[RMDB]
RNA sequence: GGGAACGACUCGAGUAGAGUCGAAAAGGGGACGACGUCAAGUCAUCAUGGCCCUUACGCCUAGGGCGACACACGUGCUACAAUGGCAUAUACAAUGAGACGCAAUACCGCGAGGUGGAGCAAAUCUAAUACUGAACUGGUUCGCCAGUUCAGUAUUAAAAGAAACAACAACAACAAC
Reactivity to 2A3 in 0.01 (KOAc 150mM, MgCl2 10mM, bicine 150mM(pH8.5), 24C), signal-to-noise 8, nucleotides 027 to 126: g030g000g000g020a020c040g000a000c010g030u100c120a090a040g020u010c010a030u050c020a030u120g080g010c000c000c000u020u040a080c100g040c010c020u050a040g030g000g030c020g050a010c020a000c010a000c100g020u030g030c020u100a080c080a160a170u190g030g000c030a020u090a010u050a090c100a070a100u170g020a030g030a040c060g010c010a020a030u040a080c010c020g020c040g030a050g010g010u020g020g010a020g000c000a020a040a020u030c010u010
Reactivity to DMS in 0.01 (KOAc 150mM, MgCl2 10mM, bicine 150mM(pH8.5), 24C), signal-to-noise 5, nucleotides 027 to 126: g010g030g010g000a050c060g020a140c020g010u010c140a050a140g030u000c040a070u030c040a080u020g020g000c000c050c030u000u000a060c200g000c060c030u010a060g000g010g010c010g000a130c110a090c180a050c120g030u000g010c000u000a100c140a100a090u020g000g010c030a050u000a110u020a090c150a060a060u040g020a070g000a130c130g000c020a050a180u030a040c010c010g030c170g000a160g040g020u000g000g010a300g000c020a030a070a070u030c040u020
This 177-nucleotide RNA was probed chemically with 2A3 and DMS. Values cover nucleotides 27 to 126. As a SHAPE reagent, 2A3 marks flexible, mostly unpaired nucleotides at the ribose 2'-OH. DMS (dimethyl sulfate) methylates the pairing face of unpaired adenines and cytosines.